Chemical mapping of a 177-nucleotide RNA with 2A3 and DMS.
The 2A3 profile rests on 18,424 reads.
High 2A3 reactivity points to a flexible backbone, as in loops and unpaired stretches.
DMS adducts were read by reverse transcription with MarathonRT.
The reactions ran in a buffer of 150 mM KOAc, 10 mM MgCl2 and 150 mM bicine (pH 8.5), at 24 C.

RNA sequence: GGGAACGACUCGAGUAGAGUCGAAAACCUGAGAUACCUGUUCCUUUGUCCAGAUCACCUUUUGAGAUAUCAGUGGAAGAAUUAAUACUUCAUAAUCCUAGCAUCGUGAGGUUUCGACCUCACGAUGGUAGAGAAUGAGGUUCGCCUCAUUCUCUACAAAAGAAACAACAACAACAAC
Reactivity to 2A3 in 0.01 (KOAc 150mM, MgCl2 10mM, bicine 150mM(pH8.5), 24C), signal-to-noise 9, nucleotides 027 to 126: c000c000u020g060a100g010a060u140a080c020c040u050g070u070u050c020c000u080u080u110g040u000c010c020a030g010a100u060c020a080c020c020u040u080u110u150g160a160g010a040u110a020u140c060a050g060u070g110g060a040a030g020a060a030u160u080a150a050u100a130c010u020u030c010a060u090a180a070u060c010c030u040a040g070c010a000u000c000g000u000g000a000g000g000u020u020u100c180g080a030c000c000u000c000a000c000g000a000u000g000
Reactivity to DMS in 0.01 (KOAc 150mM, MgCl2 10mM, bicine 150mM(pH8.5), 24C), signal-to-noise 8, nucleotides 027 to 126: c020c010u000g000a130g010a110u000a060c090c050u000g010u000u000c020c020u000u000u000g010u000c030c020a070g010a080u000c060a070c060c020u000u000u000u000g010a120g010a100u010a060u000c050a080g010u000g010g010a060a060g000a080a080u000u010a090a070u000a070c100u000u000c030a070u010a090a120u000c030c020u000a090g010c010a000u000c000g010u000g000a010g000g010u000u000u010c200g000a040c000c000u000c000a010c000g000a000u000g000